This 177-nucleotide RNA was probed chemically with DMS and 2A3. The data come from the RNA Mapping Database (RMDB), library OK2TST. For DMS the reverse transcriptase was MarathonRT. For 2A3 the reverse transcriptase was SuperScript II with manganese. The RNA was probed in 150 mM KOAc, 10 mM MgCl2 and 150 mM bicine (pH 8.5) at 24 C.
RNA sequence: GGGAACGACUCGAGUAGAGUCGAAAACGCCCCAUUUGAGCGCGGGGCGCGCGCUUGCGCGCAGCAGUGCGCGCACGGGCUUGGCGAGCACGACCGACGCCAGCGAGCUCAAUAGCGGAUAUUGGCAGAGUCAUAUUUAGUUCGCUAAAUAUGACUCAAAAGAAACAACAACAACAAC
Reactivity to DMS in 0.01 (KOAc 150mM, MgCl2 10mM, bicine 150mM(pH8.5), 24C), signal-to-noise 6, nucleotides 027 to 126: c210g010c050c000c010c080a160u000u000u000g000a020g000c020g010c080g000g010g020g030c020g010c010g010c010g030c030u000u020g050c020g020c300g020c220a090g010c090a050g000u000g000c000g020c000g010c000a030c040g000g010g000c030u000u010g020g010c020g010a120g000c060a120c080g000a130c080c040g010a150c040g010c010c010a050g010c030g000a120g000c010u010c040a050a040u000a070g010c090g020g000a120u010a080u000u000g000g000c130a160
Reactivity to 2A3 in 0.01 (KOAc 150mM, MgCl2 10mM, bicine 150mM(pH8.5), 24C), signal-to-noise 5, nucleotides 027 to 126: c060g040c000c000c000c000a100u060u060u080g030a010g010c070g010c030g050g080g090g000c010g000c010g000c000g010c010u130u220g010c060g010c070g050c060a010g000c000a010g030u010g000c000g000c000g020c010a000c000g030g060g000c020u030u070g020g000c020g020a080g040c080a040c190g140a080c060c040g060a040c030g000c020c000a020g060c020g040a020g000c000u000c020a030a060u080a060g040c100g090g030a070u080a090u250u150g110g000c080a060